[RMDB]
RNA sequence: GGGAACGACUCGAGUAGAGUCGAAAAAUCCAGGUGAUAUUAUGUCUACAACUUCAGGAAUGCGUUGCCCUGAACAUACAGGCUCCUUUAGGAAGAUCUGUGGGUUUGCAACAACACCUGUUUGUGAAAGUCAGGCAUAGUUCGCUAUGCCUGACUUAAAAGAAACAACAACAACAAC
Reactivity to 2A3 in 0.01 (KOAc 150mM, MgCl2 10mM, bicine 150mM(pH8.5), 24C), signal-to-noise 1, nucleotides 027 to 126: a000u100c000c010a040g000g180u030g050a030u040a020u300u280a090u120g110u020c020u010a080c020a140a010c050u000u000c030a060g010g070a300a150u070g000c000g090u040u010g000c000c000c040u080g020a020a020c000a010u110a000c000a020g010g010c050u010c010c020u200u280u080a120g020g030a110a020g010a300u020c020u020g000u030g030g000g000u020u000u090g030c020a020a000c010a000a030c000a020c000c010u120g060u070u000u040g040u080g080a140
Reactivity to DMS in 0.01 (KOAc 150mM, MgCl2 10mM, bicine 150mM(pH8.5), 24C), signal-to-noise 2, nucleotides 027 to 126: a130u000c010c010a110g000g000u020g010a090u010a110u000u020a060u000g000u000c000u000a080c100a070a070c100u000u000c000a010g000g010a050a120u000g000c300g020u000u000g050c010c300c120u040g000a000a040c050a100u000a010c000a040g000g010c040u000c000c000u000u000u010a160g010g000a020a020g030a030u000c000u000g020u000g000g000g000u010u000u000g000c010a000a020c020a080a200c280a050c010c020u010g000u010u000u010g000u000g000a070